[RMDB]
RNA sequence: GGGAACGACUCGAGUAGAGUCGAAAAAUACUGUAAGCCAAUAAAACAUAACGCCAAAUACAAUAAAUGCUGAGCGAUGUACUUUCUAUGUGAUAUUUUGGCGUUAUUUUGAUUUACCAUUGCACAUCGCUCAUGUUAACAGGCUAUACGGUUAUAACUACGUGACCAUGUUCGCAUGGUCACGUAGAAAAGAAACAACAACAACAAC
Reactivity to 2A3 in 0.01 (KOAc 150mM, MgCl2 10mM, bicine 150mM(pH8.5), 24C), signal-to-noise 1, nucleotides 027 to 156: a000u060a000c100u090g000u030a120a000g000c000c000a050a120u030a250a300a000a000c020a000u080a000a000c000g000c000c000a060a040a040u200a170c160a050a170u110a150a000a180u170g000c050u060g020a000g000c000g010a000u000g000u060a060c030u000u070u090c060u170a030u100g290u030g140a130u080a210u160u030u000u000g000g000c000g000u000u000a000u000u140u000u060g000a000u070u150u000a080c050c090a040u000u290g000c020a000c000a020u010c000g000c000u000c100a000u010g000u000u100a130a000c000a000g000g060c000u060a060u050a280c020g010g000u020u020a000u000a210a000
Source: RMDB library OK3TST, as collected in RNAgym. Chemical mapping of a 207-nucleotide RNA with 2A3. 2A3 adducts were read by reverse transcription with SuperScript II with manganese. Reactivities are given for positions 27 through 156.